[RMDB]
RNA sequence: GGGAACGACUCGAGUAGAGUCGAAAAUGUAAGUUCGCUUACAAAUUGCCGUAGGGAGAAGCAAGGCUCCCUGGACUUCUAUGGUUCGAAAGAGCCAUACUAGUCCCUGGAGCUGAUGACCUUCUCCCUAAACGGGGAAAAGAGGUUUCGACCUCAAUCCCUGAAUUAUGUUCGCAUAAUUCAGGGAAAAAGAAACAACAACAACAAC
Reactivity to 2A3 in 0.01 (KOAc 150mM, MgCl2 10mM, bicine 150mM(pH8.5), 24C), signal-to-noise 2, nucleotides 027 to 156: u060g010u000a010a020g000u070u220c170g020c120u000u010a000c020a030a210a150u140u160g080c020c010g020u020a000g000g000g000a000g000a040a000g010c060a050a160g010g000c010u000c000c000c000u000g010g000a000c000u020u020c000u040a020u000g000g000u000u000c000g020a060a100a070g000a020g020c010c000a000u000a000c000u010a000g020u010c010c020c000u020g000g000a000g000c000u010g020a120u080g000a050c000c000u000u000c000u010c000c010c000u000a000a000a000c000g010g000g040g050a000a100a090a100g080a030g030g030u100u200u280c220g140a090c000c010u010c000a000a050
Reactivity to DMS in 0.01 (KOAc 150mM, MgCl2 10mM, bicine 150mM(pH8.5), 24C), signal-to-noise 2, nucleotides 027 to 156: u000g000u000a000a040g020u000u000c250g040c040u000u000a040c000a040a100a160u000u010g030c040c000g040u000a060g000g020g030a010g020a030a030g020c030a070a300g020g020c000u010c000c000c030u010g020g040a010c010u000u000c010u000a000u000g040g030u010u000c010g020a150a170a280g000a030g070c000c010a020u010a000c000u000a020g020u000c010c000c010u020g010g060a050g050c000u000g020a050u000g030a070c300c010u000u000c010u000c000c000c010u000a000a010a020c060g000g010g010g000a030a070a090a090g010a040g000g000u000u000u030c220g000a060c000c000u000c000a000a230